[RMDB]
RNA sequence: GGGAACGACUCGAGUAGAGUCGAAAACUCAUUCAGGAGAUCGAUUUGCCAGUCAACAAAGGCGCGCAGGAAGUUACCUUCACCAAACUGAAUGAUACGUUCUGGAUACUGUGCACCGGGAAAAUCACGUAUGACCUAGGUUCGCCUAGGUCAUACGAAAAGAAACAACAACAACAAC
Reactivity to DMS in 0.01 (KOAc 150mM, MgCl2 10mM, bicine 150mM(pH8.5), 24C), signal-to-noise 2, nucleotides 027 to 126: c080u000c020a060u000u010c080a030g000g010a090g000a070u010c110g020a080u000u000u000g000c010c030a170g010u010c210a080a110c110a070a080a180g010g060c020g010c060g050c030a020g000g000a040a060g000u000u000a150c090c010u010u000c040a130c080c050a080a050a150c050u000g000a070a040u020g020a090u000a060c090g000u000u000c060u000g020g000a070u020a170c000u000g010u000g060c050a090c020c030g000g000g000a010a040a100a080u030c070a180
Reactivity to 2A3 in 0.01 (KOAc 150mM, MgCl2 10mM, bicine 150mM(pH8.5), 24C), signal-to-noise 1, nucleotides 027 to 126: c000u020c010a040u080u000c010a020g000g030a080g040a110u100c030g000a040u060u040u070g020c010c040a030g070u120c020a020a000c020a030a290a010g050g000c020g030c000g010c030a000g090g010a110a010g000u070u120a140c000c050u060u060c050a040c010c060a070a050a070c040u000g050a030a110u040g020a050u010a070c040g010u050u010c030u050g000g000a080u040a230c020u040g010u040g070c000a000c070c020g030g020g000a070a060a050a060u130c060a030

An RNA of 177 nucleotides, treated with DMS and 2A3 and read out base by base.
For DMS, 1,022 sequencing reads were counted.
For 2A3, 992 sequencing reads were counted.
Conditions: 150 mM KOAc, 10 mM MgCl2 and 150 mM bicine (pH 8.5), 24 C.
For DMS the reverse transcriptase was MarathonRT.
Reactivities are rounded to 0.1 and cut off at 0 and 3.